An RNA of 177 nucleotides, treated with 2A3 and DMS and read out base by base.
For DMS, 1,467 sequencing reads were counted.
The RNA was probed in 150 mM KOAc, 10 mM MgCl2 and 150 mM bicine (pH 8.5) at 24 C.
DMS adducts were read by reverse transcription with MarathonRT.
[RMDB]
RNA sequence: GGGAACGACUCGAGUAGAGUCGAAAAGAUAUGGACGAUCGCUUGGACCUAUAAGGUUCGGAAACGAACCAUAGCUAGCGGUCGGUCCUAAGUCAAAGAUCGAGACUUGUUCGCAAGUCUCGAUCAACGGACAGGAGAUGUUCGCAUCUCCUGUCCGAAAAGAAACAACAACAACAAC
Reactivity to 2A3 in 0.01 (KOAc 150mM, MgCl2 10mM, bicine 150mM(pH8.5), 24C), signal-to-noise 2, nucleotides 027 to 126: g010a020u070a030u160g000g020a000c000g020a000u020c000g020c020u100u230g160g090a300c020c020u010a050u030a280a170g000g000u020u000c020g040g010a080a090a020c010g000a000a000c010c010a000u010a000g040c020u000a000g000c000g010g000u020c040g000g060u080c010c000u000a050a010g080u040c040a030a140a100g020a010u000c010g010a010g000a000c030u010u040g020u040u100c300g000c120a000a020g010u000c000u010c000g000a010u010c010a000a000
Reactivity to DMS in 0.01 (KOAc 150mM, MgCl2 10mM, bicine 150mM(pH8.5), 24C), signal-to-noise 2, nucleotides 027 to 126: g000a030u000a230u020g010g000a070c020g000a020u000c000g010c000u000u010g030g030a050c300c010u000a010u000a230a120g000g000u000u010c000g020g010a060a070a140c010g030a020a030c000c010a040u000a010g010c020u000a000g010c010g020g010u000c000g010g010u000c000c010u000a040a100g010u010c040a090a090a120g000a010u000c010g000a020g010a000c000u000u000g000u000u000c160g010c010a000a010g020u000c000u010c000g000a000u000c010a000a140